About this RNA
Structure probing data (DMS and 2A3) for a 177-nucleotide construct. The 2A3 profile rests on 1,096 reads. It was measured as part of the RMDB library OK2TST. The RNA was probed in 150 mM KOAc, 10 mM MgCl2 and 150 mM bicine (pH 8.5) at 24 C.
RNA sequence: GGGAACGACUCGAGUAGAGUCGAAAAAUGUCAUCACCAUCACUUGCUUCGCCAGAUCACGCAUUGCAUUAUUGCGGAAAGUGACAUUACGCGCGCCACCACCGAUGGUGCUGGUGCUCUUAGCACGUAACCCACUCGAGUUCGCUCGAGUGGGUUAAAAAGAAACAACAACAACAAC
Reactivity to DMS in 0.01 (KOAc 150mM, MgCl2 10mM, bicine 150mM(pH8.5), 24C), signal-to-noise 3, nucleotides 027 to 126: a040u000g010u000c050a060u000c070a230c040c020a050u010c030a120c090u000u010g000c060u010u010c050g010c040c050a110g000a160u010c070a090c110g000c070a120u000u010g000c050a040u010u010a110u000u000g010c190g000g000a040a050a140g010u000g000a030c050a050u010u000a080c150g000c090g010c200g020c000c010a030c160c000a080c020c030g020a130u000g020g000u000g000c170u000g000g010u000g000c050u010c090u020u000a090g030c080a040c180g000
Reactivity to 2A3 in 0.01 (KOAc 150mM, MgCl2 10mM, bicine 150mM(pH8.5), 24C), signal-to-noise 1, nucleotides 027 to 126: a000u060g010u060c030a050u110c040a050c020c000a020u010c000a010c030u000u080g000c000u080u050c040g060c050c000a060g020a300u060c020a050c050g080c020a030u020u070g020c030a010u040u140a140u000u260g000c020g010g040a090a050a000g030u030g010a040c000a040u040u150a060c100g030c000g000c000g000c000c000a040c000c000a020c030c010g200a120u150g010g000u000g000c010u000g030g040u020g000c000u010c020u050u130a010g040c080a000c090g030